[RMDB]
RNA sequence: GGGAACGACUCGAGUAGAGUCGAAAAUUUUUUAGGCGGUGGACGUAUAUAGUUUACUUAAUCGUUUACUAUACGGUGGAGUACUAAUACUAUUUCACUGUCGUGCUCGCGGUUGAUCUUAGAUAAAUAUUCAGAACUUUUUCGAAAGUUCUGAAUAAAAAGAAACAACAACAACAAC
Reactivity to 2A3 in 0.01 (KOAc 150mM, MgCl2 10mM, bicine 150mM(pH8.5), 24C), signal-to-noise 2, nucleotides 027 to 126: u030u020u000u000u000u180a070g030g000c010g010g000u000g010g020a010c020g030u000a020u000a000u000a060g040u000u110u060a000c000u000u010a020a020u010c000g010u000u020u060a140c100u100a090u030a060c000g000g050u020g020g010a000g020u000a010c020u020a000a020u010a030c010u030a080u020u000u010c000a010c010u010g010u010c010g010u030g010c010u020c010g020c060g050g000u030u020g010a070u000c030u020u050a030g030a130u110a120a110a040
Reactivity to DMS in 0.01 (KOAc 150mM, MgCl2 10mM, bicine 150mM(pH8.5), 24C), signal-to-noise 2, nucleotides 027 to 126: u000u000u020u050u010u050a110g010g010c010g030g010u010g010g020a020c210g000u030a030u000a110u000a000g010u010u020u010a000c030u000u010a110a030u020c070g000u000u010u030a070c190u010a070u000a050c020g020g010u010g030g050a020g000u000a040c000u000a030a030u010a100c190u020a060u000u010u000c000a020c010u000g010u000c010g030u010g000c020u000c030g010c110g020g000u010u010g020a090u020c030u020u000a110g010a120u020a090a070a180